[RMDB]
RNA sequence: GGGAACGACUCGAGUAGAGUCGAAAACAGGUCGAUAGUACCAAUAACCCUGGUACCAAUAAGGUACUAUCGACCAUUUAGCUCUUCUUCUACAACACGCUCGCUGAAGAAGAGCAUUUCAGGUACCAGGGAAGCGAGCGGAAGGCCGAGAGGCCGAACGCGUGGCAUCAUUCGUGAUGCCACGCGUAAAAGAAACAACAACAACAAC
Reactivity to 2A3 in 0.01 (KOAc 150mM, MgCl2 10mM, bicine 150mM(pH8.5), 24C), signal-to-noise 1, nucleotides 027 to 156: c020a000g000g050u000c010g000a000u010a000g010u010a010c030c070a040a060u180a130a100c000c000c010u000g000g000u000a000c010c060a070a140u160a300a120g000g000u000a000c000u000a000u000c000g000a000c000c000a000u040u010u110a020g000c000u000c000u000u000c000u000u000c010u040a030c030a180a050c110a060c150g030c000u000c000g010c000u030g000a000a000g000a000a000g000a000g000c010a000u000u160u120c020a000g000g010u000a000c000c000a000g000g000g000a010a010g000c010g000a000g010c010g000g020a110a050g000g000c000c000g050a050g000a010g070g000c020c010g010a000